Background: An RNA of 177 nucleotides, treated with 2A3 and DMS and read out base by base. For 2A3, 2,172 sequencing reads were counted. It was measured as part of the RMDB library TTRDES. For DMS the reverse transcriptase was MarathonRT. Conditions: 150 mM KOAc, 10 mM MgCl2 and 150 mM bicine (pH 8.5), 24 C.
[RMDB]
RNA sequence: GGGAACGACUCGAGUAGAGUCGAAAAGAUAUGGAAUGAAGCAGACAUGAAGGGACUCGGAAACGAGUCCACUUCAACAGCUGCCAUUCCUAAGUCAAAGCAUACCAGGGUUCGCCCUGGUAUGCAAUCUUAUGAGACUCUUCGGAGUCUCAUAAGAAAAAGAAACAACAACAACAAC
Reactivity to 2A3 in 0.01 (KOAc 150mM, MgCl2 10mM, bicine 150mM(pH8.5), 24C), signal-to-noise 1, nucleotides 027 to 126: g000a000u050a000u080g000g040a000a030u030g010a300a030g030c000a000g170a300c080a300u300g000a020a010g060g000g020a020c000u000c020g010g000a010a000a000c010g000a000g000u070c010c030a090c000u000u000c000a060a080c030a080g040c000u030g000c010c000a000u000u000c010c000u010a030a000g000u000c060a190a120a000g000c000a020u010a000c000c000a010g060g010g000u030u110c240g170c000c000c000u000g000g000u010a000u000g000c000a000a000
Reactivity to DMS in 0.01 (KOAc 150mM, MgCl2 10mM, bicine 150mM(pH8.5), 24C), signal-to-noise 2, nucleotides 027 to 126: g000a020u010a110u000g000g000a000a000u000g000a300a200g000c000a000g000a070c060a180u000g000a000a000g020g010g000a000c000u000c000g020g000a010a030a040c020g020a020g000u010c000c030a000c010u000u020c000a120a100c200a230g000c000u000g000c000c000a020u000u000c000c000u010a000a070g000u010c000a140a190a180g020c000a020u010a010c000c000a000g000g000g020u010u020c300g000c000c000c000u010g000g000u000a000u000g010c010a010a030